[RMDB]
RNA sequence: GGGAACGACUCGAGUAGAGUCGAAAAGAAAGCGUGUGGCUGCGAUGCGUCGUAUGACCGGCCAAAUGCGACAGUCUUGCGCGCGAAAGUCCUUGAUGCUGAUAGGCCGGUUAUAGCAUCGGACGAAGGGCGUGCGCGACUUCGGUUGCGUGUGCCCAAAAGAAACAACAACAACAAC
Reactivity to DMS in 0.01 (KOAc 150mM, MgCl2 10mM, bicine 150mM(pH8.5), 24C), signal-to-noise 9, nucleotides 027 to 126: g010a110a090a120g010c020g030u000g010u010g000g010c010u000g010c140g010a080u020g020c110g010u010c070g020u000a070u010g010a040c020c000g000g000c000c000a070a120a060u020g000c010g000a090c040a040g000u010c020u040u030g010c020g010c010g010c040g010a080a080a120g010u000c010c010u020u030g030a020u000g010c000u000g010a180u020a120g000g000c000c010g000g000u000u010a070u020a030g010c000a010u000c010g000g000a030c030g000a110a100
Reactivity to 2A3 in 0.01 (KOAc 150mM, MgCl2 10mM, bicine 150mM(pH8.5), 24C), signal-to-noise 9, nucleotides 027 to 126: g100a020a060a000g010c010g000u040g010u030g040g010c020u020g020c060g060a080u130g060c060g040u050c020g020u090a090u140g070a050c000c000g010g000c000c010a050a140a090u210g000c010g010a020c010a010g010u010c000u080u180g010c020g000c000g000c010g070a110a040a010g010u000c010c000u040u210g010a010u020g000c000u020g030a040u040a100g010g000c000c000g000g000u000u030a070u040a010g000c000a000u000c010g000g000a010c020g010a080a100